[RMDB]
RNA sequence: GGGAACGACUCGAGUAGAGUCGAAAAACUAAGUCACUUUCGAGUGACUUAGUAAAAAGAUAUGGAUUGUGACAUGACGGGGUCUCGGAAACGAGACCGACGUCAACAGCACACGGUCCUAAGUCAAAAAACCUCAAUAACUUCGGUUAUUGAGGAACAUACACAUCGGAUUCGUCCGAUGUGUAUGAAAAGAAACAACAACAACAAC
Reactivity to DMS in 0.01 (KOAc 150mM, MgCl2 10mM, bicine 150mM(pH8.5), 24C), signal-to-noise 2, nucleotides 027 to 156: a030c000u000a000a010g030u000c000a010c000u010u020u000c240g050a050g050u000g000a010c000u000u010a030g010u010a020a040a020a160a100g030a120u000a260u000g000g020a040u000u000g000u000g000a120c040a300u000g000a040c030g040g000g040g060u000c000u000c040g020g000a100a090a300c000g000a020g010a000c020c000g000a050c020g000u010c000a010a020c060a150g000c090a300c020a000c010g010g000u000c000c000u010a030a190g010u000c030a000a060a090a070a060a120c010c000u010c000a030a000u000a000a000c010u020u000c300g030g000u000u010a000u000u000g030a030g050g010a000a010
Reactivity to 2A3 in 0.01 (KOAc 150mM, MgCl2 10mM, bicine 150mM(pH8.5), 24C), signal-to-noise 3, nucleotides 027 to 156: a000c000u000a000a000g000u000c000a000c010u040u090u170c270g080a020g000u000g000a000c000u000u000a000g000u000a010a010a000a010a000g060a030u090a030u130g000g000a000u030u010g020u010g020a050c050a090u050g000a000c010g000g000g000g030u000c000u000c000g040g020a080a050a060c000g000a000g000a000c000c000g010a050c000g020u000c000a020a000c020a010g150c020a010c010a010c120g010g000u000c000c000u040a080a050g040u050c070a010a030a040a050a120a180c000c010u020c000a000a000u010a000a000c010u040u050c240g100g000u000u000a000u000u010g000a000g000g000a000a000
Source information: The data come from the RNA Mapping Database (RMDB), library RNAMAK. This 207-nucleotide RNA was probed chemically with DMS and 2A3. For DMS, 3,035 sequencing reads were counted. DMS adducts were read by reverse transcription with MarathonRT. Values are in units of 0.01, from 0 to 300, in steps of 10. High 2A3 reactivity points to a flexible backbone, as in loops and unpaired stretches.